[RMDB]
This 177-nucleotide RNA was probed chemically with 2A3 and DMS. For 2A3, 14,393 sequencing reads were counted. The RNA was probed in 150 mM KOAc, 10 mM MgCl2 and 150 mM bicine (pH 8.5) at 24 C. It was measured as part of the RMDB library M2PK50.
RNA sequence: GGGAACGACUCGAGUAGAGUCGAAAAGAAGGAUAGUUCGCUAUCCUUCAAACCCACCGAAAGGCAAAUGUGUUAGAUGCCCUCUAACACAUAAAGCGGGCAAAACAGUACCGUUCGCGGUACUGAAGAUCCAAAGAUAGUUCGCUAUCUUUGGAUCAAAAGAAACAACAACAACAAC
Reactivity to 2A3 in 0.01 (KOAc 150mM, MgCl2 10mM, bicine 150mM(pH8.5), 24C), signal-to-noise 6, nucleotides 027 to 126: g000a000a000g000g010a010u010a020g010u020u030c070g010c090u000a000u000c000c010u000u000c000a010a000a010c010c000c000a010c010c030g150a160a070a010g190g000c070a110a120a060u020g010u000g000u000u000a010g000a040u300g050c010c050c000u020c000u000a010a000c000a010c000a010u020a010a030a000g040c050g020g020g040c070a030a050a040a090c000a010g000u000a000c020c000g020u030u060c220g010c010g090g000u000a000c000u000g000a000a010
Reactivity to DMS in 0.01 (KOAc 150mM, MgCl2 10mM, bicine 150mM(pH8.5), 24C), signal-to-noise 5, nucleotides 027 to 126: g000a010a010g000g010a010u000a000g010u000u000c210g030c000u000a010u000c000c000u000u000c010a020a090a120c000c010c010a190c100c060g000a060a070a090g010g010c150a060a190a020u000g000u010g000u000u000a010g010a050u020g020c270c210c080u000c000u000a000a010c000a000c000a010u000a020a070a100g010c020g010g000g020c110a100a050a100a150c010a010g000u010a000c000c000g020u000u010c210g020c010g010g010u000a000c000u000g000a050a080